An RNA of 177 nucleotides, treated with DMS and 2A3 and read out base by base. DMS adducts were read by reverse transcription with MarathonRT. The RNA was probed in 150 mM KOAc, 10 mM MgCl2 and 150 mM bicine (pH 8.5) at 24 C.
RNA sequence: GGGAACGACUCGAGUAGAGUCGAAAAAGUAAGCACUGUGAGCGCUCUUGUCUACAAUAAUAAAUUGUUAGCCAAGAAGGAGCUUUCAGGCCAGUGCUUUAAAAUACUCUAUAAGGGCAAUGUGACGCUCUAUUGGAUACUUCGGUAUCCAAUAGAGAAAAGAAACAACAACAACAAC
Reactivity to DMS in 0.01 (KOAc 150mM, MgCl2 10mM, bicine 150mM(pH8.5), 24C), signal-to-noise 2, nucleotides 027 to 126: a070g000u010a090a100g020c000a080c010u000g000u000g000a010g020c010g010c020u000c000u000u000g000u000c000u010a000c000a040a020u010a090a140u000a090a100a110u000u000g000u000u010a010g000c050c000a010a020g000a030a040g010g040a180g010c000u000u010u010c040a060g010g000c270c140a030g010u000g020c000u000u000u000a060a100a180a090u010a060c020u000c000u000a040u010a060a270g000g000g020c070a040a080u000g010u000g000a230c020g000
Reactivity to 2A3 in 0.01 (KOAc 150mM, MgCl2 10mM, bicine 150mM(pH8.5), 24C), signal-to-noise 1, nucleotides 027 to 126: a000g070u030a020a010g000c010a010c130u000g030u040g070a000g000c010g000c020u000c000u020u010g010u000c000u010a000c030a010a000u160a140a040u140a160a220a040u030u000g040u090u070a000g000c010c000a020a010g000a070a070g090g000a070g030c000u030u090u070c040a020g000g060c000c020a060g010u030g000c000u000u000u020a040a030a000a000u080a020c000u000c020u020a020u020a110a050g030g010g000c050a040a070u220g030u080g070a020c030g020